[RMDB]
RNA sequence: GGGAACGACUCGAGUAGAGUCGAAAAUUAUACGUUUAUCUUUAACGAUACCUAUACCUAGAUGGUUAUUUACUAACAGACAUUUUCCAGAUCUAUUGACUAUAACUCCUAUAGUUUCCACAUCAACCAAGUAAUGAUCAUCUAUUGUUAUAUAACAACUUAGAAGACUAUUCGUAGUCUUCUAAGUAAAAGAAACAACAACAACAAC
Reactivity to 2A3 in 0.01 (KOAc 150mM, MgCl2 10mM, bicine 150mM(pH8.5), 24C), signal-to-noise 5, nucleotides 027 to 156: u170u040a080u040a120c010g010u020u050u070a110u060c050u050u140u090a090a040c030g010a030u050a090c000c010u060a050u050a110c010c010u000a010g010a010u010g000g040u010u010a050u060u100u060a070c010u030a100a050c030a090g180a040c040a090u100u120u080u110c080c040a040g020a100u030c020u050a090u070u130g010a030c000u010a040u060a240a100c050u070c080c010u040a010u000a030g040u000u060u030c060c040a070c020a100u080c010a030a090c070c020a050a000g000u000a020a000u000g010a000u010c010a000u000c020u020a050u050u090g010u020u010a090u020a020u040a140a090c040a010
Reactivity to DMS in 0.01 (KOAc 150mM, MgCl2 10mM, bicine 150mM(pH8.5), 24C), signal-to-noise 2, nucleotides 027 to 156: u000u000a120u020a060c020g010u000u000u010a070u020c060u000u020u010a060a050c090g030a200u010a080c080c030u000a090u010a120c090c060u000a040g010a020u000g000g040u000u000a030u000u000u000a020c040u000a060a080c090a190g030a080c030a110u000u000u000u000c080c080a110g010a070u000c000u000a100u000u010g010a110c030u000a070u000a040a060c030u000c050c010u000a040u000a040g050u000u000u000c020c040a030c080a090u000c100a060a130c040c000a090a110g030u000a040a030u000g010a000u000c000a040u000c010u000a050u000u010g020u000u000a150u000a130u000a090a100c030a090